RNA sequence: GGGAACGACUCGAGUAGAGUCGAAAAACGCGUUCGGCGGCGCUGGCGCGUCCCCGGUUGAACAGUUCACCCGACCAGAACGGGUAGGCGUCGUGCGCCAGCGUGGACGGGGUGGAGAAAUAGGUCGAUCGCAGGUGACUCUGUGAGGCCAUACCUGCUUUAAAUGGGUAUUCGUACCCAUUUAAAGAAAAGAAACAACAACAACAAC
Reactivity to 2A3 in 0.01 (KOAc 150mM, MgCl2 10mM, bicine 150mM(pH8.5), 24C), signal-to-noise 3, nucleotides 027 to 156: a000c080g050c020g030u070u050c080g050g000c010g000g000c010g010c010u030g010g000c000g000c000g270u070c010c000c000c010g030g000u100u080g040a170a040c050a090g030u150u110c070a090c030c030c030g010a080c060c070a080g040a230a040c030g010g010g000u020a080g110g000c020g030u010c010g060u070g020c000g000c000c010a020g000c030g040u030g010g030a010c020g010g010g000g040u060g030g050a120g050a060a060a040u150a080g060g000u020c070g050a150u040c000g030c010a010g000g060u100g090a050c040u030c000u170g030u020g020a020g000g000c000c000a000u010a020c000c020u020g000
Reactivity to DMS in 0.01 (KOAc 150mM, MgCl2 10mM, bicine 150mM(pH8.5), 24C), signal-to-noise 2, nucleotides 027 to 156: a070c020g020c040g020u010u000c070g030g000c000g010g020c030g000c020u040g020g000c020g010c010g010u000c070c010c020c000g020g010u000u050g000a090a120c090a150g030u000u010c020a120c050c050c020g000a120c030c130a190g000a130a160c020g000g010g000u000a030g030g010c030g050u010c070g020u000g030c050g080c010c030a030g040c000g050u010g000g000a060c000g010g020g000g010u000g010g010a140g000a100a100a160u000a060g020g010u000c070g010a120u010c060g030c000a010g010g010u000g000a150c160u010c010u000g010u000g020a110g010g020c000c020a080u000a050c020c010u000g010